[RMDB]
RNA sequence: GGGAACGACUCGAGUAGAGUCGAAAACAGAAUAGACCAAAUAUCCUAUUAUAUGCUUAAAUCACAGUGUGGAAGUAUUGCCUUUGUGAUGAAAGUGUCAUGAUGACUGGAUAAUUAAUUAUUGUGUCUUCCACUAAAGUGUAGAUAGGAAAGAAAGAGAAAUCAAUUGAUUCGUCAAUUGAUUUCUAAAAGAAACAACAACAACAAC
Reactivity to DMS in 0.01 (KOAc 150mM, MgCl2 10mM, bicine 150mM(pH8.5), 24C), signal-to-noise 3, nucleotides 027 to 156: c050a120g010a090a140u020a060g000a230c040c030a080a110a180u000a120u010c000c000u000a060u010u000a110u000a040u000g000c020u000u000a120a130a120u000c080a090c040a100g010u000g050u000g010g000a060a040g010u000a090u000u000g020c020c000u000u010u000g060u010g010a030u000g000a110a060a100g040u000g030u000c040a070u000g010a050u000g020a050c020u000g010g010a070u000a030a080u010u000a050a140u000u000a090u010u000g010u000g010u000c010u000u000c030c030a060c030u000a090a050a080g020u010g050u010a060g010a050u000a040g000g040a070a050a120g010a090a080a130g010
Reactivity to 2A3 in 0.01 (KOAc 150mM, MgCl2 10mM, bicine 150mM(pH8.5), 24C), signal-to-noise 9, nucleotides 027 to 156: c050a000g140a080a120u170a070g060a040c030c010a040a070a050u130a050u020c010c010u020a030u040u050a260u010a020u090g000c010u050u080a070a110a110u230c070a090c050a140g110u070g010u020g110g020a010a020g020u090a070u110u250g020c000c010u030u050u050g040u020g020a030u020g060a110a110a080g110u120g030u070c030a030u050g060a030u070g030a040c060u060g060g030a030u050a090a050u190u110a060a090u100u090a070u080u100g050u000g010u050c000u010u000c000c000a000c020u040a080a050a030g010u010g000u010a000g000a020u020a010g020g010a020a070a000g060a020a070a000g130